Source: RMDB library M2RFPK, as collected in RNAgym.
An RNA of 207 nucleotides, treated with 2A3 and read out base by base.
For 2A3, 504 sequencing reads were counted.
2A3 adducts were read by reverse transcription with SuperScript II with manganese.
Values are in units of 0.01, from 0 to 300, in steps of 10.
[RMDB]
RNA sequence: GGGAACGACUCGAGUAGAGUCGAAAAGGGCCGUUCACUGGAUCCGAAGCCUCUAGAAGGAUAAAAUAGGCACUCCAUACCCUACUCCGACUCAAUACGUCCCCGUCGUACAGAAUGGUAACAUAUCGAACACAACCUAACUUCGGUUAGGUUGUAACUCUGUACGGAGUUUCGACUCCGUACAGAGAAAAGAAACAACAACAACAAC
Reactivity to 2A3 in 0.01 (KOAc 150mM, MgCl2 10mM, bicine 150mM(pH8.5), 24C), signal-to-noise 2, nucleotides 027 to 156: g060g020g030c080c110g130u190u250c110a060c140u060g050g040a070u190c000c010g010a010a000g000c120c010u040c060u040a230g060a200a040g140g000a050u140a110a190a010a040u110a030g030g000c000a000c020u020c020c000a040u100a210c000c000c000u020a050c020u050c000c000g040a010c020u050c010a000a300u040a150c020g030u020c020c010c000c010g100u060c010g030u020a020c000a160g100a000a140u110g080g000u060a130a030c010a060u120a070u300c110g030a160a000c040a010c000a120a000c000c000u010a000a000c010u060u060c140g060g000u020u000a000g000g000u000u000g000u000a000a000